This 177-nucleotide RNA was probed chemically with 2A3 and DMS. It was measured as part of the RMDB library OK2TST.

RNA sequence: GGGAACGACUCGAGUAGAGUCGAAAAGUUGACCACAGGAUGGGCUGGAUGCUGGAGCGGCGCAGCACCCAUAGAAUUAGCUUGCUCCAAACCAAUUUCUUAUUCCAACUUGGAUGAGAAAAAGAUCUCUCAUUAUGAAGUUCGCUUCAUAAUGAGAAAAAGAAACAACAACAACAAC
Reactivity to 2A3 in 0.01 (KOAc 150mM, MgCl2 10mM, bicine 150mM(pH8.5), 24C), signal-to-noise 5, nucleotides 027 to 126: g030u030u050g100a090c000c010a010c030a030g060g020a040u040g000g040g000c000u000g020g070a130u140g040c080u060g020g030a010g010c000g020g010c040g000c020a030g030c020a060c010c010c000a050u070a070g150a080a150u130u060a020g020c000u030u300g010c010u000c010c000a030a030a040c030c010a050a080u020u020u000c000u020u050a100u210u050c030c020a120a170c300u140u190g000g000a000u000g010a010g000a020a020a000a010a010g130a060u100c030
Reactivity to DMS in 0.01 (KOAc 150mM, MgCl2 10mM, bicine 150mM(pH8.5), 24C), signal-to-noise 7, nucleotides 027 to 126: g020u010u000g020a190c030c020a110c050a070g020g010a150u000g010g010g010c020u010g010g010a090u010g020c120u000g010g000a060g000c030g010g010c030g010c120a070g000c100a110c010c010c010a060u010a080g010a120a120u000u010a100g010c020u010u000g030c010u000c020c010a060a150a130c200c100a070a160u000u000u000c000u000u000a030u010u000c000c020a080a140c280u010u010g010g010a040u000g000a020g000a020a010a040a110a160g000a080u000c100